[RMDB]
Overview
An RNA of 207 nucleotides, treated with 2A3 and read out base by base.
RNA sequence: GGGAACGACUCGAGUAGAGUCGAAAAGAAUUGGUAUGUAAGCUACUUCUUCCAGUAGCUGCGUCAUAACAUCAAGGUUAUGCAUACUGAGCCGAAGCUCAGCUUCGGUCCUCCAAGGAAGCCCAAAUACAGCUCAGCCCGUUCGCGGGCUGAGCAAGUCUCAAUAUCGGUUCGCCGAUAUUGAGACAAAAGAAACAACAACAACAAC
Reactivity to 2A3 in 0.01 (KOAc 150mM, MgCl2 10mM, bicine 150mM(pH8.5), 24C), signal-to-noise 1, nucleotides 027 to 156: g050a000a080u030u020g000g000u020a000u020g000u000a000a000g030c010u000a000c000u020u050c000u000u000c000c000a010g000u020a000g000c000u020g000c000g000u020c000a000u000a000a000c010a030u230c280a170a110g300g000u010u010a000u000g000c000a000u000a000c020u000g000a000g000c000c000g000a000a000g020c040u100c300a030g000c000u010u000c000g000g000u000c000c000u030c050c040a030a000g020g000a000a000g000c000c000c010a010a010a010u280a010c110a020g000c010u000c000a010g000c000c000c010g040u120u050c110g010c010g140g130g040c000u000g000a010g000c000a000a000
The RNA was probed in 150 mM KOAc, 10 mM MgCl2 and 150 mM bicine (pH 8.5) at 24 C.